[RMDB]
Conditions: 150 mM KOAc, 10 mM MgCl2 and 150 mM bicine (pH 8.5), 24 C. Structure probing data (2A3) for a 177-nucleotide construct. The 2A3 profile rests on 1,043 reads. Source: RMDB library OK1LIB, as collected in RNAgym.
RNA sequence: GGGAACGACUCGAGUAGAGUCGAAAAGGCUCAGGAAACUGAGCCAAGAAUGAUCAGAGAAAAGAACUAGUGACUGAUCAGAACAGAAUAAAAGAACACUAGAAAAUAGGAGCAGGAAACUGCUCCAGGUCAUAGUACCGUUCGCGGUACUAUGACCAAAAGAAACAACAACAACAAC
Reactivity to 2A3 in 0.01 (KOAc 150mM, MgCl2 10mM, bicine 150mM(pH8.5), 24C), signal-to-noise 2, nucleotides 027 to 126: g010g000c000u020c000a000g050g050a060a070a110c010u000g000a000g030c000c000a000a000g000a010a100u020g000a000u000c000a000g060a000g080a110a090a080a030g110a120a140c010u000a000g000u000g040a060c010u000g000a000u030c010a010g010a030a040c100a020g210a180a080u160a040a160a050a030g160a010a000c000a000c010u000a000g070a150a070a030a010u190a130g000g000a000g000c000a000g010g000a070a000a000c000u000g000c000u000c000c000a000